[RMDB]
RNA sequence: GGGAACGACUCGAGUAGAGUCGAAAAGGACAAUUAUGGUUCCGCCGCCGCCCUCGAUCUUAACGUGAUGCUGGAGUUCAAACGCAAUCAGGAACGUUACCGCUUUCUGAAAUGGGGGCAGCGAGCCCCAGGACGUUCGAUUCGUCGAACGUCCUGGAAAAGAAACAACAACAACAAC
Reactivity to 2A3 in 0.01 (KOAc 150mM, MgCl2 10mM, bicine 150mM(pH8.5), 24C), signal-to-noise 2, nucleotides 027 to 126: g030g020a040c040a120a060u240u100a090u300g080g000u160u040c010c000g000c000c000g000c010c000g030c000c000c020u000c010g100a100u040c020u100u100a100a060c040g080u080g010a060u080g050c030u070g050g100a130g090u150u140c070a140a100a010c050g000c040a030a130u060c010a030g060g040a040a030c010g060u080u170a070c090c000g060c120u040u090u010c020u070g030a050a100a090u150g000g000g000g000g000c000a000g010c000g000a020g030c050c000
Reactivity to DMS in 0.01 (KOAc 150mM, MgCl2 10mM, bicine 150mM(pH8.5), 24C), signal-to-noise 2, nucleotides 027 to 126: g010g000a000c050a120a180u000u030a080u010g000g000u000u000c020c020g000c060c040g000c010c040g010c010c000c010u000c020g010a080u000c100u000u020a110a060c100g030u000g010a080u000g010c010u020g010g010a160g000u010u010c090a040a070a110c190g000c070a090a160u000c050a030g000g000a040a040c020g030u010u020a070c300c060g010c160u010u010u020c040u000g000a030a080a100u000g000g000g000g000g020c020a020g000c020g020a140g000c010c050
An RNA of 177 nucleotides, treated with 2A3 and DMS and read out base by base. The DMS profile rests on 1,163 reads. The data come from the RNA Mapping Database (RMDB), library OK2TRN. The reactions ran in a buffer of 150 mM KOAc, 10 mM MgCl2 and 150 mM bicine (pH 8.5), at 24 C.